[RMDB]
RNA sequence: GGGAACGACUCGAGUAGAGUCGAAAAGAUAUGGAUCUGGGUUGACAUGUCCGUCGGAAACGAUAGGACAACAGCAAUUAGAUCCUAAGUCAAAACCAACCUCUAUACUUCGGUAUAGAGGUUGGAACAUACGGCAAUUGUUCGCAAUUGCCGUAUGAAAAGAAACAACAACAACAAC
Reactivity to DMS in 0.01 (KOAc 150mM, MgCl2 10mM, bicine 150mM(pH8.5), 24C), signal-to-noise 4, nucleotides 027 to 126: g010a020u000a280u000g010g000a000u000c010u000g030g020g030u010u000g000a130c190a170u000g000u010c000c000g000u000c000g010g000a110a080a130c000g010a010u000a060g060g000a010c000a010a050c110a100g000c010a010a050u000u010a040g000a020u000c000c000u010a040a090g000u010c030a090a090a120a180c000c000a010a010c000c000u000c000u000a010u000a010c000u000u020c170g030g000u000a010u000a000g010a010g000g010u000u000g010g000a040a060
Reactivity to 2A3 in 0.01 (KOAc 150mM, MgCl2 10mM, bicine 150mM(pH8.5), 24C), signal-to-noise 2, nucleotides 027 to 126: g020a010u020a020u140g000g000a000u000c010u050g000g000g230u030u010g060a160c060a180u060g010u000c000c010g030u020c010g030g030a030a040a030c010g000a020u120a300g010g070a010c010a030a050c040a020g000c000a020a180u100u050a090g000a010u000c000c000u010a100a040g020u010c030a000a010a070a190c010c000a000a000c000c000u000c000u000a000u000a000c010u010u070c300g120g000u000a000u000a010g000a000g000g010u000u000g000g000a000a000
Structure probing data (DMS and 2A3) for a 177-nucleotide construct. For DMS the reverse transcriptase was MarathonRT. The 2A3 profile rests on 8,787 reads. High 2A3 reactivity points to a flexible backbone, as in loops and unpaired stretches. The data come from the RNA Mapping Database (RMDB), library TTRDEL. The reactions ran in a buffer of 150 mM KOAc, 10 mM MgCl2 and 150 mM bicine (pH 8.5), at 24 C.